[RMDB]
RNA sequence: GGGAACGACUCGAGUAGAGUCGAAAAACUCGCUGCUACGGCAGCGAGAACCUUCUAUGAUGAUUUUAUCAAAAUGACUUUCGUUCUUCUGAGUUUGCUGAAGCCACAUUUAGGUACUGAGAAGGAAUAACCACAACAAUUUCGAUUGUUGUGGUUAAAAAGAAACAACAACAACAAC
Reactivity to DMS in 0.01 (KOAc 150mM, MgCl2 10mM, bicine 150mM(pH8.5), 24C), signal-to-noise 4, nucleotides 027 to 126: a080c000u000c000g020c000u000g020c030u000a100c220g040g040c000a010g030c010g000a000g020a030a060c010c010u000u020c070u010a100u020g010a150u010g000a100u010u020u010u020a050u010c040a040a060a100a090u020g000a080c150u000u010u010c120g010u010u010c010u000u000c040u020g010a070g020u010u020u020g000c000u000g000a050a050g010c100c100a050c120a100u000u000u000a070g000g020u010a020c030u000g000a030g000a030a040g000g000a050a110
Reactivity to 2A3 in 0.01 (KOAc 150mM, MgCl2 10mM, bicine 150mM(pH8.5), 24C), signal-to-noise 6, nucleotides 027 to 126: a000c000u000c000g000c010u000g000c000u010a030c230g120g000c000a000g000c000g000a000g000a000a000c010c000u060u080c120u150a180u090g070a060u020g080a110u060u110u130u250a130u090c050a040a050a090a130u120g130a110c030u040u100u060c040g040u040u040c000u030u010c020u040g080a040g060u020u160u200g130c030u030g030a060a050g050c080c030a150c020a120u080u070u090a040g020g000u030a020c010u050g080a030g020a030a010g020g010a030a030